An RNA of 207 nucleotides, treated with 2A3 and DMS and read out base by base. For 2A3, 1,667 sequencing reads were counted. For DMS the reverse transcriptase was MarathonRT.
RNA sequence: GGGAACGACUCGAGUAGAGUCGAAAAUUCAACGGAAACCGCCCCUCUCCUAGGUUAGCUGUUCAAAGAUGGUGUUCAUGCAUAUCGAAUCAGCAAUGAGAUUUUAAAGCUGGUGUCCCUAACUUGGGCCAGUGUUGGGGUCCGACGAGCAAUGGAAUAAAUAGGUAGUGUUCGCACUACCUAUUUAAAAAGAAACAACAACAACAAC
Reactivity to 2A3 in 0.01 (KOAc 150mM, MgCl2 10mM, bicine 150mM(pH8.5), 24C), signal-to-noise 3, nucleotides 027 to 156: u070u020c020a070a000c050g040g060a040a090a100c070c040g050c000c010c000c000u020c000u000c010c030u040a040g060g000u070u040a010g010c050u030g020u070u050c070a120a050a100g020a060u070g020g070u050g030u130u210c130a110u160g020c000a010u040a050u110c010g030a050a020u030c000a010g030c020a040a100u150g010a060g010a050u060u110u110u260a110a080a030g010c000u000g000g000u040g130u090c020c010c010u020a080a090c070u050u030g020g000g000c010c020a050g020u030g010u060u070g000g000g000g010u010c020c010g030a050c020g020a010g050c080a100a060u130g020g050a040a080
Reactivity to DMS in 0.01 (KOAc 150mM, MgCl2 10mM, bicine 150mM(pH8.5), 24C), signal-to-noise 4, nucleotides 027 to 156: u000u000c050a100a120c050g000g000a080a050a090c040c050g000c020c020c020c020u000c040u010c020c030u000a070g010g010u000u000a080g030c020u000g020u000u000c070a100a090a140g010a090u000g010g020u000g010u000u000c090a120u000g010c030a080u000a040u000c040g010a180a070u000c000a050g010c020a070a160u000g000a160g010a130u010u000u010u010a040a080a250g010c000u000g030g030u000g000u000c030c020c020u010a030a060c070u000u000g020g020g000c030c040a060g020u000g020u000u000g000g010g030g010u010c010c020g010a080c060g010a130g010c060a100a070u000g010g010a090a230